[RMDB]
The record gives the reactivity of an RNA of 177 nucleotides to 2A3 and DMS. The 2A3 profile rests on 2,738 reads. Reactivities are given for positions 27 through 126. The reactions ran in a buffer of 150 mM KOAc, 10 mM MgCl2 and 150 mM bicine (pH 8.5), at 24 C. It was measured as part of the RMDB library OK2TST.
RNA sequence: GGGAACGACUCGAGUAGAGUCGAAAAAAGGAAGACGAGGCUUUCCUUCGCGAUCGCGUGUUGCCGGCGCCGUGCGGUCGCGGCGAGCAUCAGGCUGAAGCCGGCGAUGACGAGCCCGUUGACCGUAGGUGCCUGGCGUGUUCGCACGCCAGGCACCAAAAGAAACAACAACAACAAC
Reactivity to 2A3 in 0.01 (KOAc 150mM, MgCl2 10mM, bicine 150mM(pH8.5), 24C), signal-to-noise 1, nucleotides 027 to 126: a000a000g040g000a000a010g000a020c020g050a140g020g040c010u050u030u030c000c000u000u060c010g000c020g020a020u050c010g000c060g020u040g020u070u110g010c010c030g080g000c060g000c010c020g070u070g010c020g020g000u020c010g000c000g000g020c000g000a020g000c010a040u080c070a000g090g030c030u200g210a110a010g030c010c010g040g050c090g010a020u030g020a020c050g000a000g020c000c000c000g010u030u090g010a010c000c010g000u010a070
Reactivity to DMS in 0.01 (KOAc 150mM, MgCl2 10mM, bicine 150mM(pH8.5), 24C), signal-to-noise 2, nucleotides 027 to 126: a020a010g000g010a050a210g010a030c020g010a150g000g000c040u000u010u000c030c040u000u000c050g020c020g000a040u000c020g030c030g020u000g010u000u000g000c010c010g020g010c040g040c100c020g040u000g020c000g010g000u000c010g030c000g000g000c090g000a160g010c010a030u000c050a160g000g010c030u000g020a140a200g000c020c010g010g030c120g010a020u010g010a120c100g000a170g000c030c010c010g000u000u010g000a230c030c010g010u000a110